[RMDB]
RNA sequence: GGGAACGACUCGAGUAGAGUCGAAAAUUUUUUAAAAAAGGAGGAAGAAAAGAACUGAGCAUUAUUCUCUUUGACAAAAGGUAAAAUGACAAGGACUAUCAGGCUGACCUCCCUUCCCCAGGAAAUGCCGUAAAAUAAUUUUCGAAUUAUUUUACGGAAAAGAAACAACAACAACAAC
Reactivity to DMS in 0.01 (KOAc 150mM, MgCl2 10mM, bicine 150mM(pH8.5), 24C), signal-to-noise 3, nucleotides 027 to 126: u000u030u010u020u030u020a000a030a060a050a080a090g000g010a060g000g000a300a080g000a130a060a060a080g000a090a060c060u010g020a120g030c030a030u000u010a110u010u010c060u040c000u000u000u010g000a120c300a080a040a020a020g000g000u000a020a030a030a010u000g000a060c020a070a090g000g000a080c080u000a040u010c090a050g000g020c010u000g010a080c020c020u000c000c000c030u010u000c020c000c000c150a090g000g000a050a060a050u030g000
Reactivity to 2A3 in 0.01 (KOAc 150mM, MgCl2 10mM, bicine 150mM(pH8.5), 24C), signal-to-noise 2, nucleotides 027 to 126: u020u020u000u000u040u090a050a100a000a000a010a010g030g020a010g020g010a050a040g030a100a260a050a010g040a050a040c020u050g020a030g030c030a020u000u040a150u280u010c070u000c010u050u010u060g050a040c030a010a120a000a000g020g020u110a130a130a040a000u040g020a060c050a060a010g070g020a010c020u040a080u150c030a000g040g000c000u020g020a110c010c000u000c000c000c000u000u020c010c010c000c000a040g070g070a040a090a010u080g040